The data come from the RNA Mapping Database (RMDB), library M2PK50. This 177-nucleotide RNA was probed chemically with DMS and 2A3. 2A3 adducts were read by reverse transcription with SuperScript II with manganese. The reactions ran in a buffer of 150 mM KOAc, 10 mM MgCl2 and 150 mM bicine (pH 8.5), at 24 C.
RNA sequence: GGGAACGACUCGAGUAGAGUCGAAAAGAAGUACUGUUCGCAGUACUUCAAACGGCAACGGCAAGGCCAAGCCGAAGCCGAACGGCAAGCGGAAGGCCAAAAAAACCGUUCCCUUCGGGGAACGGAAGUGAUAGCAAUGGUUCGCCAUUGCUAUCACAAAAGAAACAACAACAACAAC
Reactivity to DMS in 0.01 (KOAc 150mM, MgCl2 10mM, bicine 150mM(pH8.5), 24C), signal-to-noise 2, nucleotides 027 to 126: g000a010a000g010u000a010c000u000g010u020u000c280g050c000a030g020u010a000c000u000u000c000a020a080a110c070g020g000c060a020a170c040g000g000c120a130a150g000g010c000c010a090a230g000c000c020g000a000a120g000c030c000g000a030a100c220g020g020c050a000a150g000c060g000g020a020a250g010g020c000c010a000a020a030a160a070a080a130c000c000g000u000u000c000c000c000u000u000c190g010g000g030g000a030a010c000g010g000a000a020
Reactivity to 2A3 in 0.01 (KOAc 150mM, MgCl2 10mM, bicine 150mM(pH8.5), 24C), signal-to-noise 2, nucleotides 027 to 126: g000a010a000g000u000a000c000u020g050u060u100c240g010c100a010g000u000a000c000u000u010c000a000a000a030c020g010g010c010a010a010c030g050g030c040a110a190g080g000c030c000a030a040g040c000c010g010a000a000g000c020c010g040a110a050c140g040g020c060a110a140g060c030g000g080a060a030g000g010c000c050a040a020a030a000a000a020a060c000c010g000u010u000c010c010c000u000u030c190g030g010g000g000a000a000c000g000g020a020a000